[RMDB]
RNA sequence: GGGAACGACUCGAGUAGAGUCGAAAAUGCAGUAGACAUACUUGCACACUGGCACACACACAUGCAGAACACUUGAGUCCACGUGUACACACGCAGUAACAUGCACACACAGCUCACAUGCAUUAUGUAUACUUUCUCAUUUGUGUAGUACACACAACCGUGACGACUAGUUCGCUAGUCGUCACGGAAAAGAAACAACAACAACAAC
Reactivity to 2A3 in 0.01 (KOAc 150mM, MgCl2 10mM, bicine 150mM(pH8.5), 24C), signal-to-noise 2, nucleotides 027 to 156: u120g010c010a010g010u060a010g030a020c050a080u070a040c070u090u130g060c010a000c000a010c030u080g080g000c010a030c010a020c000a000c010a000c000a080u070g000c020a010g070a170a020c060a010c120u120u170g000a000g010u040c050c040a050c120g000u020g000u080a030c050a000c000a000c090g040c000a020g000u040a060a030c060a070u060g020c000a030c000a000c020a010c000a130g080c030u030c070a030c010a070u070g060c000a010u050u090a030u220g070u030a060u030a060c000u040u070u020c050u050c070a080u000u110u040g010u000g000u020a070g070u140a020c030a000c040a000c010a050a120